Source: RMDB library OK2TRN, as collected in RNAgym. Chemical mapping of a 177-nucleotide RNA with DMS and 2A3. The 2A3 profile rests on 2,890 reads. The DMS profile rests on 6,192 reads. 2A3 is a SHAPE reagent: it acylates the 2'-hydroxyl of flexible nucleotides of all four kinds.

RNA sequence: GGGAACGACUCGAGUAGAGUCGAAAAGAGUAUGAAGUAUGUAGUCCUGAAGCUGACGGUCCGUGGCAUGUCGCGUGAAGUUCCUGUGAUCUUCCCCGACCUCAUCAGUCAUGUGAACAUGGCCGCGUCCAUGUCGAUCAUUCGUGAUCGACAUGGAAAAAGAAACAACAACAACAAC
Reactivity to DMS in 0.01 (KOAc 150mM, MgCl2 10mM, bicine 150mM(pH8.5), 24C), signal-to-noise 5, nucleotides 027 to 126: g000a120g010u010a070u000g010a080a070g030u020a050u010g010u000a080g000u000c020c010u000g010a100a090g020c040u000g010a110c080g000g010u000c090c030g040u010g000g040c040a030u000g010u000c030g010c040g030u000g010a050a090g020u000u000c060c050u010g010u000g000a060u000c080u000u000c030c010c010c100g010a050c040c040u000c070a070u000c090a090g010u000c030a040u000g010u010g010a070a080c040a020u000g010g010c010c040g000c130g000
Reactivity to 2A3 in 0.01 (KOAc 150mM, MgCl2 10mM, bicine 150mM(pH8.5), 24C), signal-to-noise 2, nucleotides 027 to 126: g070a000g030u150a090u180g090a100a020g040u090a070u160g080u060a060g060u010c000c030u020g030a040a020g010c050u030g020a040c020g060g040u050c080c030g020u020g020g000c030a030u040g020u080c020g000c000g040u050g040a080a020g010u030u030c000c000u060g070u100g020a080u010c030u030u030c010c000c000c000g020a040c020c010u030c000a140u040c000a010g040u030c000a000u060g050u030g110a090a010c010a030u040g110g000c010c010g040c000g040